This 177-nucleotide RNA was probed chemically with DMS and 2A3. The RNA was probed in 150 mM KOAc, 10 mM MgCl2 and 150 mM bicine (pH 8.5) at 24 C.
RNA sequence: GGGAACGACUCGAGUAGAGUCGAAAAUCGACUUCCUUCGGGAAGUCGAAAAUAAGGGUCGGCUCAUGAAGCUAGUCGAACAUGCUGCUCGACCUAGACUAAAAAGAAUCUCGUUCGCGAGAUUCAAGAUAAGGUCACAGUUCGCUGUGACCUUAUCAAAAGAAACAACAACAACAAC
Reactivity to DMS in 0.01 (KOAc 150mM, MgCl2 10mM, bicine 150mM(pH8.5), 24C), signal-to-noise 2, nucleotides 027 to 126: u000c000g020a030c000u000u000c000c010u000u010c230g060g000g000a020a020g010u000c000g000a010a000a050a070u000a080a160g020g000g000u000c000g020g000c020u000c010a020u010g000a080a300g000c050u010a100g020u010c040g040a100a150c000a030u000g000c170u000g010c010u000c030g010a020c000c010u000a020g010a110c150u010a040a070a040a130a060g000a000a000u000c000u000c000g020u010u010c190g020c040g000a010g000a010u000u000c000a010a010
Reactivity to 2A3 in 0.01 (KOAc 150mM, MgCl2 10mM, bicine 150mM(pH8.5), 24C), signal-to-noise 2, nucleotides 027 to 126: u010c010g000a010c000u010u010c000c010u010u070c100g110g000g020a000a000g000u010c010g000a000a010a000a000u080a030a070g010g000g010u010c000g000g000c010u000c020a010u010g030a030a010g030c100u140a070g220u270c000g010a050a030c000a010u020g070c030u010g010c040u100c150g000a000c000c000u000a030g040a020c010u060a030a080a010a040a090g000a010a000u000c010u000c010g040u050u060c220g000c010g070a000g000a010u010u010c000a000a000
2A3 is a SHAPE reagent: it acylates the 2'-hydroxyl of flexible nucleotides of all four kinds. The 2A3 profile rests on 2,508 reads.